[RMDB]
RNA sequence: GGGAACGACUCGAGUAGAGUCGAAAAAGGGCAGGGUGAAAUUCCCGAUCGGCGGUAAAGUCCGCAAGCCGAACGAAAAAGGUUUGGCAGGAACCGGUGAGAUUCCGGUACCGACAGUAUAGUCUGGAUGACCACUUCAGCUUCGGCUGAAGUGGAAGAAUGCCUAUAACUUCGGUUAUAGGCAUUCAAAAGAAACAACAACAACAAC
Reactivity to DMS in 0.01 (KOAc 150mM, MgCl2 10mM, bicine 150mM(pH8.5), 24C), signal-to-noise 2, nucleotides 027 to 156: a100g040g060g000c040a250g030g020g050u000g010a060a240a250u020u000c010c010c000g000a020u000c020g050g010c010g010g000u000a070a130a090g010u000c000c010g020c010a290a300g050c000c000g050a030a230c020g010a040a070a220a060a160g020g000u000u020u000g010g070c010a000g050g020a030a000c000c000g010g000u020g000a300g010a300u000u000c020c010g030g000u000a000c010c030g000a140c010a050g010u000a130u000a070g020u000c010u090g000g000a260u000g000a190c020c010a020c000u000u000c030a000g010c010u010u000c260g110g000c000u000g000a010a010g040u000g020g020a000a030
Reactivity to 2A3 in 0.01 (KOAc 150mM, MgCl2 10mM, bicine 150mM(pH8.5), 24C), signal-to-noise 1, nucleotides 027 to 156: a000g090g030g020c130a090g030g030g000u010g000a000a030a020u010u010c000c000c020g020a000u000c000g000g020c000g000g000u000a000a000a010g000u000c000c000g020c010a000a000g000c000c010g010a020a010c010g060a100a100a040a060a020g090g000u010u010u000g000g010c000a010g010g000a000a000c000c010g000g000u010g000a010g010a000u000u000c010c010g010g000u000a000c000c000g000a000c000a000g000u010a010u010a000g000u000c000u010g010g020a070u120g060a010c000c000a000c000u000u000c000a000g000c010u030u120c190g150g000c000u000g000a000a000g000u000g000g000a000a010